[RMDB]
RNA sequence: GGGAACGACUCGAGUAGAGUCGAAAAGAUAUGGAGCAAGGCCCUAGAGGCAGCUCGGAAACGAGCUGCUCCCCACCUAGGGAACUACCUUUCCCUCCUAAGUCAAAGCGUGACUUCGGUCACGCAACCUUUUUGCAUAGUUCGCUAUGCAAAAAGGAAAAGAAACAACAACAACAAC
Reactivity to DMS in 0.01 (KOAc 150mM, MgCl2 10mM, bicine 150mM(pH8.5), 24C), signal-to-noise 3, nucleotides 027 to 126: g000a050u000a200u010g000g000a040g060c200a090a000g000g000c000c000c000u010a030g000a110g010g000c010a010g000c000u000c000g040g010a110a120a130c000g010a000g000c000u010g000c000u000c060c020c000c040a300c070c000u020a010g000g000g010a040a060c040u010a300c050c020u000u000u020c120c200c010u000c000c000u010a060a110g020u010c060a050a140a120g010c000g040u010g020a000c000u000u010c130g010g010u000c000a000c000g010c020a000a040
Reactivity to 2A3 in 0.01 (KOAc 150mM, MgCl2 10mM, bicine 150mM(pH8.5), 24C), signal-to-noise 2, nucleotides 027 to 126: g040a030u120a040u300g010g010a020g020c060a050a050g000g020c000c000c000u020a010g000a010g010g000c000a010g000c010u000c000g020g000a060a070a020c010g010a010g000c010u000g010c000u030c010c020c000c000a000c000c000u000a010g000g000g050a010a040c030u190a040c020c000u050u070u150c020c000c030u020c000c020u090a230a130g100u130c090a150a070a020g000c000g010u010g000a000c000u040u130c300g080g000u000c020a000c000g000c000a010a020